Record summary:
Structure probing data (DMS and 2A3) for a 177-nucleotide construct. The RNA was probed in 150 mM KOAc, 10 mM MgCl2 and 150 mM bicine (pH 8.5) at 24 C. 2A3 adducts were read by reverse transcription with SuperScript II with manganese. It was measured as part of the RMDB libraries RFM100 and RFMREP. Values are in units of 0.01, from 0 to 300, in steps of 10.

[RMDB]
RNA sequence: GGGAACGACUCGAGUAGAGUCGAAAAUGGGAAGCGAAGACCCCGUAGAGUUUUACUGCAGUCUGUCGUUGAAGCUUGGUUAUAGGUAUGCAGUGUAAGUGGGAGAAUUCGAUUAUAAGUCGCCAGGCUCAUAGUAAGAGUUCGCUCUUACUAUGAGAAAAGAAACAACAACAACAAC
Reactivity to DMS in 0.01 (KOAc 150mM, MgCl2 10mM, bicine 150mM(pH8.5), 24C), signal-to-noise 9, nucleotides 027 to 126: u010g000g010g010a120a090g010c020g000a040a030g010a230c060c010c010c030g020u020a100g010a140g010u020u010u020u010a030c010u000g000c020a050g010u010c050u010g010u000c070g010u000u020g000a090a110g010c090u010u010g010g010u010u020a080u010a050g010g010u010a080u000g000c010a010g010u000g010u010a030a070g020u010g000g000g000a070g000a060a160u000u000c020g000a060u010u010a100u020a080a100g010u000c050g010c020c030a070g000g000
Reactivity to 2A3 in 0.01 (KOAc 150mM, MgCl2 10mM, bicine 150mM(pH8.5), 24C), signal-to-noise 9, nucleotides 027 to 126: u100g020g010g040a060a010g040c010g010a030a000g060a100c000c010c000c020g030u130a090g010a040g130u040u060u100u130a020c010u010g010c010a020g010u020c020u040g060u050c040g070u060u120g090a090a020g050c070u120u090g020g040u140u070a080u050a080g050g000u090a160u140g010c010a020g010u020g040u110a100a060g040u100g040g020g010a100g050a050a100u050u020c010g010a010u050u060a090u120a150a030g040u040c030g010c060c000a000g020g020